[RMDB]
RNA sequence: GGGAACGACUCGAGUAGAGUCGAAAAGGGUUUGGAUUACAUCAAUAGUCACAUGAGCAGAAGUAAACAGAACAAGAAGUACUGCGGUUAUUCAAGUUCAAAGUUCACACUAUCGCAAUAAUUUGAAGUAUUAUAACACUUUCGAGUGUUAUAAUACAAAAGAAACAACAACAACAAC
Reactivity to 2A3 in 0.01 (KOAc 150mM, MgCl2 10mM, bicine 150mM(pH8.5), 24C), signal-to-noise 5, nucleotides 027 to 126: g050g000g020u050u060u070g040g020a080u070u090a040c020a060u070c040a050a110u050a070g030u030c010a020c020a130u090g040a020g000c030a020g020a150a000g040u090a030a050a070c030a050g020a030a010c020a080a030g050a050a000g020u020a010c010u030g060c030g060g020u010u020a060u080u070c040a060a010g020u000u030c020a130a050a000g000u080u060c030a030c000a010c050u060a060u140c040g000c070a020a120u120a140a080u120u070u150g040a090a010
Reactivity to DMS in 0.01 (KOAc 150mM, MgCl2 10mM, bicine 150mM(pH8.5), 24C), signal-to-noise 6, nucleotides 027 to 126: g010g020g020u000u010u010g010g010a080u010u000a040c060a080u000c070a060a070u000a050g000u000c060a050c090a070u010g010a080g010c040a060g010a080a060g010u010a040a040a050c070a090g000a030a040c020a040a210g000a050a050g010u000a040c050u000g030c100g030g020u000u000a110u000u000c030a040a270g010u000u000c030a050a060a110g000u010u000c050a060c070a080c080u000a040u000c070g020c080a050a060u010a040a090u010u000u000g000a080a140